RNA sequence: GGGAACGACUCGAGUAGAGUCGAAAACGACGUAGUUUCGACUACGUCGACAGGGAAACGAGCCAAGUGGCGCCGAGCACUUAAAAACACCGGAAAAUAAAAGAGCCCGUACUUUCGAGUACGGGAAACAGAAUACUACUUUCGAGUAGUAUUCUGUAAAAGAAACAACAACAACAAC
Reactivity to 2A3 in 0.01 (KOAc 150mM, MgCl2 10mM, bicine 150mM(pH8.5), 24C), signal-to-noise 1, nucleotides 027 to 126: c000g000a000c010g020u000a020g020u000u090u130c200g060a020c000u000a000c000g020u000c000g000a030c030a030g040g000g030a110a060a040c090g000a080g000c010c010a060a020g010u040g030g030c070g000c030c000g010a030g040c010a010c030u170u180a070a050a040a040a010c030a050c020c020g040g010a020a020a070a230u070a030a130a050a080g120a070g160c000c010c000g000u010a000c020u060u060u140c210g040a010g030u030a000c020g000g000g050a010a000
Reactivity to DMS in 0.01 (KOAc 150mM, MgCl2 10mM, bicine 150mM(pH8.5), 24C), signal-to-noise 2, nucleotides 027 to 126: c020g000a010c000g050u000a020g010u000u000u010c210g000a030c000u010a000c010g010u000c000g000a040c110a130g020g010g010a100a060a100c060g010a140g020c030c040a080a040g000u000g000g000c030g000c010c020g010a140g020c020a020c050u000u020a030a020a060a050a040c190a060c110c010g030g000a050a130a100a110u020a060a080a140a240g010a220g020c000c000c000g000u000a000c000u000u000u010c100g020a010g010u000a000c000g010g000g000a000a020
The record gives the reactivity of an RNA of 177 nucleotides to 2A3 and DMS. DMS adducts were read by reverse transcription with MarathonRT. The data come from the RNA Mapping Database (RMDB), library M2PK50. High DMS reactivity at an A or C suggests that its Watson-Crick edge is free. For 2A3, 1,634 sequencing reads were counted.